Structure probing data (DMS and 2A3) for a 207-nucleotide construct.
Conditions: 150 mM KOAc, 10 mM MgCl2 and 150 mM bicine (pH 8.5), 24 C.
For DMS, 6,100 sequencing reads were counted.
It was measured as part of the RMDB library OK3TST.
RNA sequence: GGGAACGACUCGAGUAGAGUCGAAAAGUCAGGUAUCAUCAUUUGCCAGUUUUCUAUUGAACCAGUGCAGUCGAGCUGGCUACUUGACAAUGGCAUUGUGAGAAAAUUAGGCUACUAUUCCUUAUCACUGAAGGGUGUAACAUGCCCUUAGGAACUACCCAUGUGUAACAUUCGUGUUACACAUGGGAAAAGAAACAACAACAACAAC
Reactivity to DMS in 0.01 (KOAc 150mM, MgCl2 10mM, bicine 150mM(pH8.5), 24C), signal-to-noise 3, nucleotides 027 to 156: g010u010c050a070g020g040u020a070u000c040a090u020c040a130u000u000u010g030c010c000a120g040u000u010u010u020c040u000a240u020u000g010a130a200c120c010a040g010u010g030c020a180g000u000c040g010a090g030c000u010g030g040c050u010a030c050u000u010g000a040c030a080a070u000g020g030c020a090u000u000g010u000g000a070g000a050a010a030a070u000u010a150g040g000c000u010a100c040u000a120u010u000c020c000u010u000a130u000c050a120c060u000g030a060a070g020g040g060u010g010u000a100a110c180a120u000g000c000c000c000u000u000a050g000g000a060a060c070u000a190
Reactivity to 2A3 in 0.01 (KOAc 150mM, MgCl2 10mM, bicine 150mM(pH8.5), 24C), signal-to-noise 7, nucleotides 027 to 156: g050u040c020a020g040g060u090a060u110c070a040u040c050a080u090u090u160g000c010c010a020g030u070u010u040u000c050u040a130u060u130g040a070a050c040c000a040g020u030g050c030a030g040u040c030g050a010g000c000u020g030g020c010u020a010c010u020u030g010a010c030a060a210u060g060g000c020a020u010u050g030u060g060a030g040a020a040a040a030u070u070a090g020g020c010u030a050c020u040a100u050u080c000c000u060u090a120u170c070a050c120u050g080a020a010g000g020g010u050g020u060a090a040c030a060u160g000c000c000c000u000u020a020g010g010a020a040c040u080a050